[RMDB]
Structure probing data (2A3) for a 207-nucleotide construct.
RNA sequence: GGGAACGACUCGAGUAGAGUCGAAAACGCUCAUCACCGGACUGACCUUUCUUGACCCCAAAGAUGCCACACAGGUUCAGGGGCUGUUUCGGCAUUUGCAGGUCAGGUUUGGUGACGGGCCGUGGCAGGAUGUUAAGGGGCUGAAUGAAGUGGGCAAGGUCGAUAAUGGAUUCGUCCAUUAUCGACCAAAAGAAACAACAACAACAAC
Reactivity to 2A3 in 0.01 (KOAc 150mM, MgCl2 10mM, bicine 150mM(pH8.5), 24C), signal-to-noise 1, nucleotides 027 to 156: c000g010c000u020c000a000u050c000a000c000c000g000g000a010c010u010g010a020c010c000u020u170u180c190u220u200g090a070c050c010c000c050a050a060a020g050a030u020g000c000c000a080c010a000c000a050g000g090u120u090c050a030g000g020g030g000c030u030g040u000u000u130c120g010g020c000a000u030u050u190g030c070a000g010g000u030c000a030g020g210u010u000u030g030g000u020g000a010c020g000g000g000c000c000g000u010g040g070c050a000g000g060a080u090g050u200u130a090a080g020g010g020g030c060u010g010a040a080u010g010a090a030g000u040g020g030g000c080a120a030